The record gives the reactivity of an RNA of 177 nucleotides to 2A3 and DMS. The reactions ran in a buffer of 150 mM KOAc, 10 mM MgCl2 and 150 mM bicine (pH 8.5), at 24 C. It was measured as part of the RMDB library OK2TRN. For 2A3 the reverse transcriptase was SuperScript II with manganese.
RNA sequence: GGGAACGACUCGAGUAGAGUCGAAAAUGCGGAGUUAGUGAGGGUGCAUCCGAAAAGCUCCCUAGCCGGAAGGAAGGGCUACAGCACCAGCGACGGAAAGACUUUUUCAUACCUGGAAGGGACAAAACUGAUGUAGAUGGUUCGCCAUCUACAUCAGAAAAGAAACAACAACAACAAC
Reactivity to 2A3 in 0.01 (KOAc 150mM, MgCl2 10mM, bicine 150mM(pH8.5), 24C), signal-to-noise 2, nucleotides 027 to 126: u110g000c050g050g020a030g050u090u110a080g000u120g130a050g040g040g020u040g030c010a060u030c050c040g050a050a060a000a040g030c020u000c030c030c010u010a040g000c050c030g020g080a060a020g070g030a020a050g060g020g000c010u050a060c030a060g030c000a010c020c020a010g010c060g050a070c060g010g090a030a050a000g070a040c010u120u040u030u030u110c070a050u100a120c000c000u040g050g020a040a010g080g010g010a020c040a030a110a030a040
Reactivity to DMS in 0.01 (KOAc 150mM, MgCl2 10mM, bicine 150mM(pH8.5), 24C), signal-to-noise 4, nucleotides 027 to 126: u020g000c070g000g000a070g000u000u000a060g020u010g020a150g000g010g000u000g020c070a080u010c060c030g000a100a060a100a140g020c060u000c010c000c020u020a100g030c050c020g000g020a180a080g020g010a080a080g000g030g000c090u020a020c090a090g000c110a110c030c030a060g000c070g000a110c190g020g010a030a060a060g010a090c080u000u000u000u010u000c070a080u010a070c220c020u000g000g010a070a060g000g000g000a080c130a050a060a060a160